[RMDB]
RNA sequence: GGGAACGACUCGAGUAGAGUCGAAAAAUGCCGCAUUCAGCGACGGUGACUCUAGUGGGCAACUGUCUAUCUAGCGUUGACAUCUACAUACUAUAUAGUAAUACCAAUACUCAAGACUACGAAACGGAGGAGGCUAUAUGUUCGCAUAUAGCCUCCUAAAAGAAACAACAACAACAAC
Reactivity to 2A3 in 0.01 (KOAc 150mM, MgCl2 10mM, bicine 150mM(pH8.5), 24C), signal-to-noise 2, nucleotides 027 to 126: a000u100g010c000c050g000c010a010u040u110c040a020g000c030g050a070c000g040g040u040g040a030c000u000c020u020a020g000u010g020g000g000c030a260a150c160u130g000u020c000u010a070u000c000u020a000g060c000g080u000u020g050a020c000a100u040c020u030a010c050a030u080a090c010u040a110u070a030u080a160g080u080a080a040u030a060c000c010a040a070u060a130c010u020c040a100a000g000a040c050u090a090c040g120a110a050a020c060g160g010
Reactivity to DMS in 0.01 (KOAc 150mM, MgCl2 10mM, bicine 150mM(pH8.5), 24C), signal-to-noise 1, nucleotides 027 to 126: a140u060g000c030c000g030c060a110u000u000c040a060g000c020g020a070c000g000g030u000g010a010c000u000c120u070a020g000u070g000g000g000c120a150a090c300u210g000u000c020u000a080u070c000u000a110g000c060g070u020u000g000a010c070a100u060c150u010a010c040a040u010a010c010u000a090u010a090u000a080g070u010a050a110u000a210c040c070a080a090u000a080c010u030c070a010a070g020a010c080u050a010c080g000a090a110a040c160g000g040
Description
Source: RMDB library OK1LIB, as collected in RNAgym. An RNA of 177 nucleotides, treated with 2A3 and DMS and read out base by base. DMS adducts were read by reverse transcription with MarathonRT. Reactivities are given for positions 27 through 126. The 2A3 profile rests on 1,310 reads.